The record gives the reactivity of an RNA of 207 nucleotides to 2A3.
2A3 adducts were read by reverse transcription with SuperScript II with manganese.
Reactivities are given for positions 27 through 156.
It was measured as part of the RMDB library M2RFPK.
RNA sequence: GGGAACGACUCGAGUAGAGUCGAAAAAGCUGGUAGUACUACGGUACUACCAGCAUAAUUCGUGGUUCGAAAACCUCCCACGCAAAAAAACCAAGGAAAAACGCCGAGUAGUACGCUACUCGGCGAAGGUACCGGAAUCAGUUCGCUGAUUCCGGAAGUAAUACCUGAUGUUCGCAUCAGGUAUUACAAAAGAAACAACAACAACAAC
Reactivity to 2A3 in 0.01 (KOAc 150mM, MgCl2 10mM, bicine 150mM(pH8.5), 24C), signal-to-noise 1, nucleotides 027 to 156: a000g000c010u030g000g000u000a000g000u010a020c000u010a040c120g060g000u000a000c010u000a010c010c000a010g000c000a000u000a000a020u040u040c030g010u030g040g020u150u110c100g000a030a090a200a270c000c060u050c000c010c010a070c090g130c100a000a090a020a020a040a090a140c020c020a060a050g050g060a070a060a050a000a000c020g010c000c010g000a020g000u000a000g000u020a000c140g010c090u000a000c000u000c000g000g000c010g000a000a000g000g000u050a050c000c000g010g010a000a000u040c010a000g080u040u100c150g010c110u000g000a000u000u020c000c020g010g000a000a010